[RMDB]
RNA sequence: GGGAACGACUCGAGUAGAGUCGAAAAGCCGCACGAUACGUCGUGCGGCAAGUACGAACAUGUCAAAUCUCGCAGACAUGAAACGUACAAAAGCGAGAAAAAACUAGGUGCAUACGUGCACCUAGAAGGUCGUUUUAAAUUUCGAUUUAAAACGACCAAAAGAAACAACAACAACAAC
Reactivity to DMS in 0.01 (KOAc 150mM, MgCl2 10mM, bicine 150mM(pH8.5), 24C), signal-to-noise 2, nucleotides 027 to 126: g000c020c000g020c000a020c010g020a010u010a090c270g040u020c000g120u000g030c000g060g000c000a000a030g000u040a030c030g000a140a240c020a000u000g030u010c000a050a070a070u050c010u030c060g000c140a210g000a030c000a010u000g000a030a100a130c100g010u000a040c110a040a040a120a100g010c070g000a070g020a000a090a020a070a130a110c010u010a040g000g000u040g000c000a030u020a070c180g000u000g000c000a010c000c000u000a000g000a020a040
Reactivity to 2A3 in 0.01 (KOAc 150mM, MgCl2 10mM, bicine 150mM(pH8.5), 24C), signal-to-noise 7, nucleotides 027 to 126: g000c010c000g010c000a000c010g000a010u030a050c280g110u010c000g000u020g010c000g000g000c000a010a000g010u030a010c030g010a120a010c010a000u010g000u010c020a030a070a300u050c070u030c070g070c040a020g010a010c000a000u010g010a070a030a000c050g050u120a030c060a020a080a010a030g040c060g020a040g000a050a080a010a030a000a020c000u010a000g000g000u000g000c000a010u020a050c270g080u020g000c000a000c010c000u000a000g000a000a010